[RMDB]
RNA sequence: GGGAACGACUCGAGUAGAGUCGAAAAAUGGAAUGUCUCGGUAUAAAACCCGAUUGUAUGCUCCAUCUACUGAGAUAGGGAAAAACCGCCUCAGGGCUGGAGGUGGGACCUGCGGGCAGCAAUACUGGCGACAGUGGUUGUUCGCAACCACUGUCGCAAAAGAAACAACAACAACAAC
Reactivity to 2A3 in 0.01 (KOAc 150mM, MgCl2 10mM, bicine 150mM(pH8.5), 24C), signal-to-noise 1, nucleotides 027 to 126: a000u080g000g000a000a140u040g090u000c000u050c070g000g070u100a020u020a140a020a020a020c000c000c000g050a070u000u180g060u200a120u040g030c080u000c000c000a080u010c000u130a150c080u040g010a110g120a200u100a210g010g010g020a130a100a160a050a000c000c000g070c000c000u010c000a010g020g080g070c230u100g110g000a030g010g000u090g000g020g000a080c000c030u020g020c100g000g000g000c000a000g050c000a070a000u050a130c000u000g010